[RMDB]
RNA sequence: GGGAACGACUCGAGUAGAGUCGAAAACUAUGGUCCCAGCUAAUUGGGAGGCUAAAGUGGGAGGAUCUCAUGAGCUCAGGAGAUUGAGGCUGCAAUGAGCCAUGAUUGCACCUCUGUAUUCCAGCCUGGACGGACAGGGCAAGACCCUGUCUGUCUAGGUCCCCAGGUGAUUCGUCACCUGGGGACCAAAAGAAACAACAACAACAAC
Reactivity to 2A3 in 0.01 (KOAc 150mM, MgCl2 10mM, bicine 150mM(pH8.5), 24C), signal-to-noise 1, nucleotides 027 to 156: c030u050a170u140g020g020u050c000c000c000a030g060c150u170a110a150u120u060g010g020g010a050g010g070c080u100a120a000a040g070u100g020g060g000a000g030g010a080u000c020u000c050a060u010g060a010g020c000u000c080a040g040g000a000g030a000u080u160g030a090g040g080c100u040g010c040a030a010u110g020a060g050c040c010a040u100g000a030u020u090g000c070a020c000c020u000c000u010g010u010a120u130u000c000c000a010g000c020c020u000g010g010a000c000g010g020a000c000a000g010g020g100c060a150a160g080a300c000c000c010u000g000u000c030u030g000u000c000u000a000